[RMDB]
RNA sequence: GGGAACGACUCGAGUAGAGUCGAAAAUCUUCUUCGACUCGGACCGGCUCAUCUUCGACAAAGGGCGGCAGUCCUCAGUACUCUUACUCUUUUCUGUAAAGAGGAGACUGCUGGACCUUCCGCCCAAGUUCGAGAUGGGCCUCAGUUCCGAGCGAAGGCUUAGGCAAUGGUUCGCCAUUGCCUAAGCAAAAGAAACAACAACAACAAC
Reactivity to 2A3 in 0.01 (KOAc 150mM, MgCl2 10mM, bicine 150mM(pH8.5), 24C), signal-to-noise 2, nucleotides 027 to 156: u020c030u040u000c020u010u000c020g160a200c030u000c000g000g020a000c010c030g000g000c020u010c000a000u030c040u300u150c020g000a000c020a030a150a040g010g020g010c010g010g000c020a020g030u010c010c010u020c010a030g000u220a300c020u040c050u090u170a280c010u110c000u100u200u170u080c220u300g300u300a040a030a000g010a000g030g000a000g010a000c000u010g040c110u010g000g000a000c000c030u130u000c000c020g000c000c000c000a000a000g010u020u020c020g000a000g000a000u000g010g020g000c000c000u020c000a000g010u090u000c010c000g020a000g030c000g000a000a000g000